[RMDB]
RNA sequence: GGGAACGACUCGAGUAGAGUCGAAAAGAAGAGAAGAAACGGCACCUAUAAGGUGGUGCCGAACAAGCGUGACCUACCAGCACGCAAGGAGCAGUCUGGUAUGACUGCAAUGGUAAGGUAAGAGAAAAAUUAGGACCGAUUUCGAUCGGUCCUAAUUAAAAGAAACAACAACAACAAC
Reactivity to 2A3 in 0.01 (KOAc 150mM, MgCl2 10mM, bicine 150mM(pH8.5), 24C), signal-to-noise 3, nucleotides 027 to 126: g120a020a030g070a000g040a180a000g030a020a130a030c030g000g000c010a000c030c010u120a070u050a300a060g260g030u120g010g000u000g000c000c000g020a000a000c010a000a010g000c000g010u020g000a110c000c030u000a020c020c000a010g060c000a000c020g000c010a000a050g050g000a070g030c000a000g010u050c010u150g110g080u300a130u260g020a010c020u000g010c000a000a010u060g080g040u050a050a050g100g000u070a050a020g000a010g050a240a000a000
Reactivity to DMS in 0.01 (KOAc 150mM, MgCl2 10mM, bicine 150mM(pH8.5), 24C), signal-to-noise 2, nucleotides 027 to 126: g010a000a130g030a030g000a070a100g020a110a150a150c010g000g020c000a000c000c000u020a180u030a180a070g010g030u020g000g020u000g000c020c010g050a120a070c180a070a160g000c000g000u000g040a040c040c000u020a010c080c050a130g000c020a040c040g000c020a050a120g000g020a140g000c000a000g000u010c010u000g020g040u000a080u060g010a050c010u000g000c020a020a000u000g000g000u010a060a030g000g000u010a080a050g020a080g010a030a050a030
Conditions: 150 mM KOAc, 10 mM MgCl2 and 150 mM bicine (pH 8.5), 24 C.
The record gives the reactivity of an RNA of 177 nucleotides to 2A3 and DMS.
2A3 adducts were read by reverse transcription with SuperScript II with manganese.
For DMS the reverse transcriptase was MarathonRT.
For 2A3, 1,487 sequencing reads were counted.
Source: RMDB library OK1LIB, as collected in RNAgym.
Reactivities are given for positions 27 through 126.